[RMDB]
RNA sequence: GGGAACGACUCGAGUAGAGUCGAAAACUUCAACAGAUACGGUCAAAAGCAAACACCAUACCUUCCUUGAGCUGUUCAUGACUGUAAGUUGCGCUUUUCAAGAAAUUUUCUAGUAGUUAAGGGGAAGUCGCGAAAAUUAUUUCGAUAAUUUUCGCGAAAAAGAAACAACAACAACAAC
Reactivity to 2A3 in 0.01 (KOAc 150mM, MgCl2 10mM, bicine 150mM(pH8.5), 24C), signal-to-noise 3, nucleotides 027 to 126: c020u050u050c030a020a000c020a030g090a070u080a030c000g020g010u000c010a000a050a020a110g010c010a030a020a090c030a020c040c020a010u070a110c000c020u040u070c020c000u050u090g050a020g000c010u000g020u130u120c050a070u020g020a010c010u040g030u060a030a060g010u020u050g010c060g060c090u030u050u040u060c030a040a040g090a120a060a030u070u110u020u000c010u050a040g030u010a040g030u130u120a060a030g030g010g000g020a020a000g040
Reactivity to DMS in 0.01 (KOAc 150mM, MgCl2 10mM, bicine 150mM(pH8.5), 24C), signal-to-noise 3, nucleotides 027 to 126: c070u010u020c040a050a040c120a100g010a170u010a020c040g000g030u000c020a020a110a060a060g030c060a120a090a130c080a120c060c020a020u040a100c120c040u010u000c030c020u000u040g010a110g000c020u010g000u000u010c100a080u000g000a070c060u000g010u020a030a070g000u010u000g000c110g010c050u020u010u000u000c030a090a160g000a040a050a110u020u000u000u000c010u010a100g020u030a060g000u020u000a030a040g000g000g000g010a060a080g000

An RNA of 177 nucleotides, treated with 2A3 and DMS and read out base by base. High DMS reactivity at an A or C suggests that its Watson-Crick edge is free. The data come from the RNA Mapping Database (RMDB), library OK1LIB. Reactivities are given for positions 27 through 126.